[RMDB]
RNA sequence: GGGAACGACUCGAGUAGAGUCGAAAAGAUAUGGAGCAUGAAUAGCGAGGAUCUACUGGAUCGGAAACGAUCCGUAGGGAGCUACAUGCUCCUAAGUCAAAAUCCAAUCGAGUUCGCUCGAUUGGAAGUAUUAUGUGGCGUUCGCGCCACAUAAUACAAAAGAAACAACAACAACAAC
Reactivity to DMS in 0.01 (KOAc 150mM, MgCl2 10mM, bicine 150mM(pH8.5), 24C), signal-to-noise 1, nucleotides 027 to 126: g000a020u010a000u010g000g000a010g000c000a000u020g000a160a180u000a010g020c000g000a130g000g010a040u010c000u000a030c010u010g020g000a020u000c000g000g010a010a000a020c010g010a000u000c000c000g000u000a010g010g020g000a010g020c000u010a070c010a000u000g010c010u010c000c010u000a000a120g000u020c000a170a060a180a200u000c010c000a010a000u010c000g010a030g000u000u020c300g020c020u000c000g010a040u010u000g000g010a020a040
Reactivity to 2A3 in 0.01 (KOAc 150mM, MgCl2 10mM, bicine 150mM(pH8.5), 24C), signal-to-noise 1, nucleotides 027 to 126: g000a000u020a010u010g020g000a000g000c020a010u020g040a300a300u180a150g000c020g120a300g010g020a010u030c010u010a020c090u210g010g010a000u010c000g000g000a020a000a000c010g000a000u000c000c000g000u000a010g000g000g010a000g000c000u010a010c000a000u000g010c010u000c000c000u010a000a010g000u000c020a090a000a000a090u030c000c000a000a000u000c000g000a000g070u130u190c300g110c170u000c010g000a010u000u000g000g010a000a020
This 177-nucleotide RNA was probed chemically with DMS and 2A3. The DMS profile rests on 1,601 reads. The data come from the RNA Mapping Database (RMDB), library TTRDES. 2A3 adducts were read by reverse transcription with SuperScript II with manganese. The reactions ran in a buffer of 150 mM KOAc, 10 mM MgCl2 and 150 mM bicine (pH 8.5), at 24 C. In probing experiments dimethyl sulfate is read out at A N1 and C N3, which are open when not base-paired.